[RMDB]
RNA sequence: GGGAACGACUCGAGUAGAGUCGAAAAGAUAUGGAGUACAGCUUGGACCCACGGGUCGGAAACGACCCAGUGGCUAGCUGCUCCUAAGUCAAACAAGUAGAAUGGUCUUCGGACCAUUCUACUUGAACACAUUAACUGUGUUCGCACAGUUAAUGUGAAAAGAAACAACAACAACAAC
Reactivity to 2A3 in 0.01 (KOAc 150mM, MgCl2 10mM, bicine 150mM(pH8.5), 24C), signal-to-noise 7, nucleotides 027 to 126: g030a020u070a050u210g010g000a010g020u130a210c010a010g020c010u100u190g120g120a300c030c010c010a010c030g000g000g000u010c020g040g020a100a110a060c000g000a010c010c010c020a010g000u010g000g020c010u010a000g000c000u000g010c000u010c000c000u010a110a010g070u030c040a060a090a180c010a030a020g000u000a000g000a000a010u020g010g000u010c020u090u100c300g030g000a000c000c000a000u000u000c000u000a000c000u000u010g000a000a000
Reactivity to DMS in 0.01 (KOAc 150mM, MgCl2 10mM, bicine 150mM(pH8.5), 24C), signal-to-noise 9, nucleotides 027 to 126: g000a030u010a300u000g000g010a020g020u010a110c030a020g040c000u000u010g030g010a100c300c010c010a010c020g000g010g010u000c000g000g000a090a080a220c010g000a010c000c000c010a050g040u010g000g000c020u000a010g010c000u000g000c000u000c000c000u000a010a070g010u000c030a130a110a300c010a000a010g000u000a000g000a010a010u000g000g010u000c000u000u010c190g020g000a010c000c000a000u000u000c000u000a000c000u000u000g000a070a220